[RMDB]
RNA sequence: GGGAACGACUCGAGUAGAGUCGAAAAGGUGCAUCAGACUUCCGUACACAUACAAGGUAGAAAAGGGCGGGCAGCUGAACCGACUCUUGAAACUCUUCGUCUGCCACCCCGAUAAACUCACGAGGGGCGAGUACCUGGCCAACGCCACGCGCCUGAACGAUAUGAUCUCAUUCGUGAGAUCAUAUCGAAAAGAAACAACAACAACAAC
Reactivity to DMS in 0.01 (KOAc 150mM, MgCl2 10mM, bicine 150mM(pH8.5), 24C), signal-to-noise 2, nucleotides 027 to 156: g030g020u010g030c010a100u030c030a090g010a090c060u000u010c020c040g020u000a100c060a300c070a160u010a090c080a120a080g010g030u010a080g010a050a140a170a090g010g020g000c040g040g000g020c040a040g010c100u010g030a060a070c030c010g030a060c040u000c040u000u000g000a140a100a090c010u000c020u000u000c080g020u000c010u000g010c050c040a090c020c010c000c000g040a100u000a040a090a060c080u000c040a060c060g000a170g010g010g000g030c080g010a120g020u000a060c020c050u010g000g010c010c050a060a110c150g000c000c000a020c050g000c050g000c060c000u000g000a100a210
Reactivity to 2A3 in 0.01 (KOAc 150mM, MgCl2 10mM, bicine 150mM(pH8.5), 24C), signal-to-noise 5, nucleotides 027 to 156: g020g000u020g030c010a070u090c040a060g080a100c020u110u020c040c030g060u090a070c070a020c020a050u170a070c030a030a100g010g050u080a040g110a110a140a010a030g030g010g000c060g050g010g000c020a060g040c060u070g020a040a020c050c020g140a140c030u020c000u070u120g060a100a090a060c030u030c020u120u060c040g060u020c020u030g040c020c020a070c020c000c000c000g000a030u120a080a120a020c050u080c060a030c080g030a060g020g000g000g010c000g010a010g030u050a070c000c030u030g000g020c010c060a070a030c080g000c010c000a040c030g030c010g030c000c000u060g040a100a010
Structure probing data (DMS and 2A3) for a 207-nucleotide construct. The 2A3 profile rests on 3,138 reads. The RNA was probed in 150 mM KOAc, 10 mM MgCl2 and 150 mM bicine (pH 8.5) at 24 C.